Conditions: 150 mM KOAc, 10 mM MgCl2 and 150 mM bicine (pH 8.5), 24 C. Structure probing data (2A3 and DMS) for a 177-nucleotide construct. The 2A3 profile rests on 35,042 reads. It was measured as part of the RMDB library OK2TRN. Reactivities are given for positions 27 through 126. For DMS the reverse transcriptase was MarathonRT.

RNA sequence: GGGAACGACUCGAGUAGAGUCGAAAAAGGCGAAGUGGCGGCUUUCUGUAGCGCCCUAUACAGGUACAAUAGGUUCACCCAGCGCCAUUCGCUGACUGGCGGGCUGUGGCUGCACCCAGAAGGGCUCCCUUGUAUUAGGAUUCGUCCUAAUACAAGGAAAAGAAACAACAACAACAAC
Reactivity to 2A3 in 0.01 (KOAc 150mM, MgCl2 10mM, bicine 150mM(pH8.5), 24C), signal-to-noise 9, nucleotides 027 to 126: a000g030g000c020g020a060a010g130u030g070g000c070g030g090c050u040u120u040c010u040g010u010a010g040c000g020c050c000c000u010a010u010a010c020a010g020g050u080a050c070a110a150u110a220g080g000u110u190c040a100c050c020c010a010g010c000g000c010c000a010u030u030c040g010c060u030g040a060c070u030g040g030c010g050g010g000c050u070g050u110g150g000c020u030g010c020a030c000c010c010a020g080a090a030g020g010g000c010u060c010
Reactivity to DMS in 0.01 (KOAc 150mM, MgCl2 10mM, bicine 150mM(pH8.5), 24C), signal-to-noise 9, nucleotides 027 to 126: a120g000g000c010g010a040a040g030u010g010g010c010g020g000c040u000u000u000c020u000g000u000a020g010c100g010c060c000c000u000a100u010a030c040a020g010g010u010a060c150a120a110u010a080g010g000u000u000c130a100c080c020c030a080g010c020g010c030c020a050u000u000c030g010c030u000g000a090c110u000g000g010c030g010g000g000c050u000g010u010g010g000c050u000g010c050a120c030c010c030a120g010a090a050g010g000g010c040u010c110